Overview:
Structure probing data (2A3 and DMS) for a 207-nucleotide construct. For DMS the reverse transcriptase was MarathonRT. The data come from the RNA Mapping Database (RMDB), library OK3TST.
RNA sequence: GGGAACGACUCGAGUAGAGUCGAAAACGAUCAGUACGUUCGCGUACUGAUCGAAGCUACUGGAGACAGUAGCAAGUCUAAGACCUUGUUAGGCGGAAACAAGGUAUAAUGGAGGAAGGCCGGACCUCCAUACUUAGACAACCGCCAACCGGCCAACGCGCUAAUAUAUAUUCGUAUAUAUUAGCGCAAAAGAAACAACAACAACAAC
Reactivity to 2A3 in 0.01 (KOAc 150mM, MgCl2 10mM, bicine 150mM(pH8.5), 24C), signal-to-noise 6, nucleotides 027 to 156: c010g000a000u000c000a000g000u010a010c010g020u050u080c250g000c000g090u000a000c000u000g000a000u000c000g000a000a000g000c000u000a000c000u000g010g010a060g010a040c000a000g000u000a000g000c000a000a030g000u000c000u000a000a020g010a050c000c000u000u000g020u020u050a130g060g130c080g060g060a040a010a010c000a010a000g030g050u040a110u070a040a050u040g000g010a000g000g030a080a230g010g000c000c040g080g020a270c010c000u000c000c000a000u010a010c000u000u000a000g010a010c010a030a070c080c050g080c080c030a020a030c000c000g000g000c000c000a010a010c090
Reactivity to DMS in 0.01 (KOAc 150mM, MgCl2 10mM, bicine 150mM(pH8.5), 24C), signal-to-noise 2, nucleotides 027 to 156: c010g020a010u000c000a010g000u000a000c000g020u000u010c300g030c060g070u000a000c030u000g010a000u010c000g020a080a070g030c000u010a010c010u000g000g000a300g010a300c020a040g000u000a010g020c020a030a130g020u010c000u000a020a000g000a140c010c020u000u000g000u000u010a070g020g000c050g100g010a300a100a040c030a040a040g000g040u000a060u020a040a060u000g010g000a030g000g020a090a080g000g010c000c020g000g000a300c020c010u030c000c000a020u000a030c050u000u010a010g000a070c020a080a200c150c070g000c100c090a090a100c000c010g020g000c000c000a100a100c180